[RMDB]
RNA sequence: GGGAACGACUCGAGUAGAGUCGAAAAGCUACUUUCAAGCCUAAAGAUCUUCUCAAACUUUUCAGCUUUUUUGAGCAUGGUUAAGAAAUAGUGAGAAAAUUAAAAAGGUUAAUGCUCAGAAGAAGACGGUUAGUUACAAUUUCGAUUGUAACUAACCAAAAGAAACAACAACAACAAC
Reactivity to DMS in 0.01 (KOAc 150mM, MgCl2 10mM, bicine 150mM(pH8.5), 24C), signal-to-noise 2, nucleotides 027 to 126: g020c070u010a080c060u010u000u000c120a130a080g000c000c000u000a050a120a300g000a030u000c020u000u000c000u000c010a090a100a160c040u000u000u000u010c030a110g020c010u010u010u000u000u010u030g000a000g020c020a080u010g010g000u010u000a050a090g000a050a060a060u000a070g010u000g020a050g000a000a000a030a060u020u000a010a050a070a180a060g000g000u000u020a060a060u000g000c030u010c110a040g020a080a060g010a070a060g010a150c250
Reactivity to 2A3 in 0.01 (KOAc 150mM, MgCl2 10mM, bicine 150mM(pH8.5), 24C), signal-to-noise 2, nucleotides 027 to 126: g010c010u050a010c010u140u140u100c050a050a030g000c000c000u090a080a080a040g020a060u020c030u050u000c000u000c000a110a230a180c060u100u070u060u090c050a010g040c000u170u060u100u040u160u300g030a000g000c000a060u040g160g000u080u070a050a030g040a020a110a070u080a040g060u060g030a090g040a030a070a030a000u140u120a050a090a080a010a000g000g020u030u030a070a000u050g000c000u020c100a030g030a100a010g020a010a000g040a030c040
This 177-nucleotide RNA was probed chemically with DMS and 2A3. The reactions ran in a buffer of 150 mM KOAc, 10 mM MgCl2 and 150 mM bicine (pH 8.5), at 24 C. Source: RMDB library OK2TST, as collected in RNAgym. The DMS profile rests on 1,562 reads. For 2A3 the reverse transcriptase was SuperScript II with manganese.